[RMDB]
RNA sequence: GGGAACGACUCGAGUAGAGUCGAAAAGAUAUGGAACCGUACCAGGGAGCUGACGAUCGGAAACGAUCGUACCAGCUUUGAUCUGGGCGGUUCCUAAGUCAAACAAACGAGGUUCGCCUCGUUUGAAGCUCUUUAUAGUCUUCGGACUAUAAAGAGCAAAAGAAACAACAACAACAAC
Reactivity to DMS in 0.01 (KOAc 150mM, MgCl2 10mM, bicine 150mM(pH8.5), 24C), signal-to-noise 3, nucleotides 027 to 126: g000a020u000a300u010g000g000a010a010c000c010g020u000a100c010c000a020g030g000g010a050g020c000u000g020a080c000g000a010u000c000g020g000a090a080a210c000g000a000u000c000g000u000a020c300c020a000g010c000u000u000u010g000a130u010c000u000g010g000g010c020g000g000u000u000c000c000u020a000a050g000u000c020a160a100a300c020a010a010a000c000g000a030g030g030u000u020c300g020c010c000u000c000g000u000u000u000g010a120a160
Reactivity to 2A3 in 0.01 (KOAc 150mM, MgCl2 10mM, bicine 150mM(pH8.5), 24C), signal-to-noise 2, nucleotides 027 to 126: g010a010u050a040u130g000g020a010a020c020c010g040u290a300c090c030a020g030g070g110a050g020c020u000g000a020c000g010a000u020c010g010g020a090a030a020c010g000a000u000c020g000u010a060c020c020a000g020c000u080u150u230g050a010u030c020u010g000g000g000c000g000g010u000u010c000c000u000a000a000g000u000c020a030a070a150c000a000a000a010c000g020a000g000g020u070u160c240g190c060c010u000c010g000u000u000u010g000a020a010
An RNA of 177 nucleotides, treated with DMS and 2A3 and read out base by base. DMS adducts were read by reverse transcription with MarathonRT. Values cover nucleotides 27 to 126. The DMS profile rests on 2,983 reads.